[RMDB]
RNA sequence: GGGAACGACUCGAGUAGAGUCGAAAACGAUUGGUUAGGACCGUCAUUUCAGAAAAGGUUGAAAUGGCUUUGACCCCAAAGAUGACUGCGCUUACAUUCUCAGCUGACGAUGAAGCGUCACUGGAGACUACCAGACAUCAUUCGUGAUGUCUGGUAGAAAAGAAACAACAACAACAAC
Reactivity to DMS in 0.01 (KOAc 150mM, MgCl2 10mM, bicine 150mM(pH8.5), 24C), signal-to-noise 4, nucleotides 027 to 126: c070g000a140u020u000g030g010u000u000a070g020g020a120c090c240g000u000c010a020u010u010u000c050a070g000a120a080a120a100g000g020u010u010g010a020a020a060u000g010g020c060u000u000u000g000a130c050c000c040c050a060a070a100g000a070u000g000a050c040u000g000c110g000c040u010u010a050c090a080u010u000c040u000c010a040g000c200u000g010a020c030g010a220u000g010a080a130g000c020g010u000c030a010c040u000g010g010a050g010a170
Reactivity to 2A3 in 0.01 (KOAc 150mM, MgCl2 10mM, bicine 150mM(pH8.5), 24C), signal-to-noise 5, nucleotides 027 to 126: c020g110a140u090u150g030g000u070u090a060g020g030a040c010c000g010u010c000a020u010u020u010c020a030g150a180a250a100a040g180g030u060u020g020a010a020a030u070g020g010c000u030u050u110g070a070c010c000c000c010a080a080a000g050a060u110g020a040c040u050g030c030g010c080u050u080a040c040a150u120u040c050u000c020a060g030c150u040g010a000c020g070a100u200g170a110a040g160c000g000u000c010a000c010u030g050g010a060g020a030